[RMDB]
RNA sequence: GGGAACGACUCGAGUAGAGUCGAAAACUCCAUUGCUUCGGCAAUGGAGAAACAGGACGUGAGACCGAAACGGAGGUAGGUCCAACUACCUUCUCACUAAAAAAACGCUUAGGUUCGCCUAAGCGAACCUAUAUCUCCCCUUCGGGGGAGAUAUAGGAAAAGAAACAACAACAACAAC
Reactivity to DMS in 0.01 (KOAc 150mM, MgCl2 10mM, bicine 150mM(pH8.5), 24C), signal-to-noise 3, nucleotides 027 to 126: c010u000c000c010a000u000u000g000c010u000u010c210g070g010c000a000a000u010g010g010a000g020a020a050a090c130a070g000g000a120c120g000u000g000a050g010a200c100c030g000a050a060a130c180g010g000a010g000g010u000a000g010g000u000c180c120a070a210c010u010a010c000c000u010u000c020u000c060a020c080u010a000a000a020a060a030a120a140c050g000c010u000u000a000g010g010u000u010c300g010c000c020u000a000a010g010c020g000a020a030
Reactivity to 2A3 in 0.01 (KOAc 150mM, MgCl2 10mM, bicine 150mM(pH8.5), 24C), signal-to-noise 3, nucleotides 027 to 126: c000u030c010c000a000u000u010g010c000u030u040c190g110g000c000a020a010u000g000g000a000g020a000a010a000c050a030g030g070a020c060g060u040g050a050g020a070c040c080g070a120a150a020c140g100g020a010g020g010u010a000g000g030u050c050c000a060a130c020u020a000c010c000u060u010c040u000c010a060c090u220a010a080a030a050a000a080a090c000g000c000u010u000a010g000g060u060u040c300g100c060c000u010a000a010g020c000g000a000a000
About this RNA: Structure probing data (DMS and 2A3) for a 177-nucleotide construct. It was measured as part of the RMDB library M2PK50. For DMS the reverse transcriptase was MarathonRT. The reactions ran in a buffer of 150 mM KOAc, 10 mM MgCl2 and 150 mM bicine (pH 8.5), at 24 C.